[RMDB]
RNA sequence: GGGAACGACUCGAGUAGAGUCGAAAAGAUAUGGAGCGGGAGCUCCGACAUUUAAGCUCGGAAACGAGGUCACAAUGUUCGGAGCGAAGAACGCUCCUAAGUCAAAACGUGUCGUUCGCGACACGAACUCUGUCUAAUAGUUCGCUAUUAGACAGAGAAAAGAAACAACAACAACAAC
Reactivity to DMS in 0.01 (KOAc 150mM, MgCl2 10mM, bicine 150mM(pH8.5), 24C), signal-to-noise 8, nucleotides 027 to 126: g010a050u010a300u000g000g010a010g010c000g000g010g020a120g010c000u000c000c000g000a010c010a000u000u000u010a140a180g000c000u010c000g000g010a110a100a220c010g010a010g010g010u000c080a100c300a020a010u000g000u000u000c020g010g000a020g020c000g000a060a080g000a110a160c010g000c000u000c000c000u000a000a090g010u010c020a080a070a110a150c010g010u000g010u000c000g010u000u010c210g020c010g010a010c000a000c010g000a050a080
Reactivity to 2A3 in 0.01 (KOAc 150mM, MgCl2 10mM, bicine 150mM(pH8.5), 24C), signal-to-noise 7, nucleotides 027 to 126: g020a010u080a040u200g000g010a000g010c000g010g020g020a020g000c010u000c000c000g000a000c000a000u030u030u030a040a020g070c000u010c010g010g020a050a080a050c010g040a020g140g090u100c030a040c020a050a010u040g120u250u150c020g000g000a000g000c000g000a030a000g020a010a000c000g000c010u000c000c000u010a070a000g030u010c030a020a020a090a150c020g000u000g000u010c020g010u060u100c300g000c020g120a000c000a000c000g000a020a020
The record gives the reactivity of an RNA of 177 nucleotides to DMS and 2A3. Conditions: 150 mM KOAc, 10 mM MgCl2 and 150 mM bicine (pH 8.5), 24 C. 2A3 adducts were read by reverse transcription with SuperScript II with manganese. Source: RMDB library TTRDEL, as collected in RNAgym. For DMS the reverse transcriptase was MarathonRT.